[RMDB]
RNA sequence: GGGAACGACUCGAGUAGAGUCGAAAAAGAGGAAAGAAGAACGCGAGACGCGAACCUGUGAGUGGAAACCCGCUUUAUUCACUGGGGUCGACAGCUCUGGGGAGAGAAGGGAGGAUCGGAUGGGAAGGAAGAUGGGCGUUCGCGCCCAUCAAAAGAAACAACAACAACAAC
Reactivity to 2A3 in 0.01 (KOAc 150mM, MgCl2 10mM, bicine 150mM(pH8.5), 24C), signal-to-noise 3, nucleotides 027 to 129: a000g070a040g000g040a010a000a050g010a020a000g010a030a020c030g030c040g030a040g020a060c040g020c060g020a060a030c020c000u070g020u010g060a000g010u010g010g060a090a040a000c000c000c010g040c050u090u090u060a130u090u120c050a050c090u090g000g020g040g030u000c060g000a030c020a060g020c000u000c070u070g030g000g000g010a030g000a000g020a010a000g000g000g020a030g000g000a010u010c000g020g000a020u070g010g020g020a020a050g020g000a000a040
Reactivity to DMS in 0.01 (KOAc 150mM, MgCl2 10mM, bicine 150mM(pH8.5), 24C), signal-to-noise 4, nucleotides 027 to 129: a030g040a070g000g000a020a050a080g050a100a030g030a100a110c060g050c180g050a090g040a100c050g000c060g050a060a090c060c070u020g040u020g010a040g010u030g050g050a050a090a070c000c070c030g010c000u070u040u000a070u090u050c030a060c100u060g030g010g010g060u000c030g060a150c150a120g020c040u010c060u050g000g000g000g000a070g050a090g000a110a080g070g010g030a190g000g020a040u000c060g000g000a070u050g020g010g040a070a050g040g000a050a040
Annotation
Chemical mapping of a 170-nucleotide RNA with 2A3 and DMS.